[RMDB]
RNA sequence: GGGAACGACUCGAGUAGAGUCGAAAAGAUAUGGAGCCUGGCAAGCCCUUGGGUCGGAAACGACCCUUGGGUGAUGACCCAGGAACUACUCCUAAGUCAAACAGGAGUCCCUUCGGGGACUCCUGAACUAUCAGGGAGGGUUCGCCCUCCCUGAUAGAAAAGAAACAACAACAACAAC
Reactivity to DMS in 0.01 (KOAc 150mM, MgCl2 10mM, bicine 150mM(pH8.5), 24C), signal-to-noise 1, nucleotides 027 to 126: g000a060u000a190u000g000g040a020g030c000c030u000g000g000c040a110a300g040c000c000c010u000u000g000g030g020u010c000g010g000a080a040a200c000g000a020c000c010c000u010u020g000g030g010u000g000a090u000g000a170c300c000c010a000g020g000a110a040c230u000a300c010u010c000c000u000a070a130g010u010c020a180a070a230c020a020g000g000a000g000u000c000c000c000u000u010c190g000g070g000g010a020c000u000c000c000u010g030a020a220
Chemical mapping of a 177-nucleotide RNA with DMS. High DMS reactivity at an A or C suggests that its Watson-Crick edge is free.